[RMDB]
RNA sequence: GGGAACGACUCGAGUAGAGUCGAAAAGAUAUGGAAGUGUGAUGGCUAGCGUCAGGAUCGGAAACGAUCCCUGACGCUUGGACCCAUACACUUCCUAAGUCAAAACCAGUAUCUUCGGAUACUGGAAGUAAUAGUAAGAGUUCGCUCUUACUAUUACAAAAGAAACAACAACAACAAC
Reactivity to 2A3 in 0.01 (KOAc 150mM, MgCl2 10mM, bicine 150mM(pH8.5), 24C), signal-to-noise 5, nucleotides 027 to 126: g020a010u060a030u170g000g010a000a000g010u020g010u060g110a030u020g010g030c040u030a030g000c010g000u020c000a000g010g010a010u000c010g020g040a070a060a060c010g000a010u010c030c020c020u000g000a000c000g000c000u000u000g000g010a010c000c000c000a000u010a010c000a000c000u000u000c000c000u000a030a010g020u000c030a010a010a090a210c000c000a000g000u000a010u000c020u050u170c300g190g000a010u000a000c000u010g000g000a020a010
Reactivity to DMS in 0.01 (KOAc 150mM, MgCl2 10mM, bicine 150mM(pH8.5), 24C), signal-to-noise 7, nucleotides 027 to 126: g010a050u000a300u000g000g010a020a010g010u000g010u000g010a020u000g000g000c030u000a020g020c000g020u000c000a020g000g010a040u000c000g010g000a110a100a250c000g000a010u000c160c050c060u000g010a010c000g010c000u000u000g010g000a120c300c010c010a020u010a030c010a010c000u000u000c000c000u000a010a080g000u000c040a110a080a150a230c000c000a000g010u000a000u000c000u000u020c270g020g000a010u000a000c000u000g000g010a020a060

Conditions: 150 mM KOAc, 10 mM MgCl2 and 150 mM bicine (pH 8.5), 24 C.
Structure probing data (2A3 and DMS) for a 177-nucleotide construct.
For 2A3 the reverse transcriptase was SuperScript II with manganese.
Values cover nucleotides 27 to 126.
For DMS, 13,319 sequencing reads were counted.
For 2A3, 26,272 sequencing reads were counted.